[RMDB]
Source: RMDB library TTRDEL, as collected in RNAgym. The record gives the reactivity of an RNA of 177 nucleotides to DMS and 2A3. For 2A3 the reverse transcriptase was SuperScript II with manganese. The RNA was probed in 150 mM KOAc, 10 mM MgCl2 and 150 mM bicine (pH 8.5) at 24 C. For DMS, 3,665 sequencing reads were counted. DMS adducts were read by reverse transcription with MarathonRT.
RNA sequence: GGGAACGACUCGAGUAGAGUCGAAAAGAUAUGGACGUUGAACUACUGGUGUCCGAAGAACUGCUUCGGAAACGAAGCAGGGAGGACACUGGCAACGUCCUAAGUCAAAGCGGCCUUCGGGCCGCAACUGUAUGUCGUAGUUCGCUACGACAUACAGAAAAGAAACAACAACAACAAC
Reactivity to DMS in 0.01 (KOAc 150mM, MgCl2 10mM, bicine 150mM(pH8.5), 24C), signal-to-noise 3, nucleotides 027 to 126: g010a050u010a300u000g010g000a010c000g000u010u000g000a100a090c130u000a300c020u010g000g030u000g010u000c010c000g020a080a110g020a140a260c000u000g010c000u000u000c000g000g000a100a050a110c000g010a010a010g000c010a000g000g000g000a050g010g000a010c000a010c000u000g000g000c000a020a010c000g010u000c000c000u010a000a040g000u000c050a100a140a110g020c010g000g010c000c010u000u020c210g010g000g020c000c010g020c000a000a030
Reactivity to 2A3 in 0.01 (KOAc 150mM, MgCl2 10mM, bicine 150mM(pH8.5), 24C), signal-to-noise 3, nucleotides 027 to 126: g040a020u090a030u190g000g000a000c010g000u010u010g050a180a130c100u200a060c030u300g000g000u000g010u030c010c000g050a120a020g000a020a010c000u010g010c000u010u010c010g020g040a090a070a050c010g000a000a000g000c000a010g000g000g010a010g000g000a000c000a000c010u000g000g000c000a010a000c000g000u000c000c000u000a050a010g010u000c010a040a030a120g000c000g000g000c000c000u070u170c260g070g020g000c030c010g000c000a000a010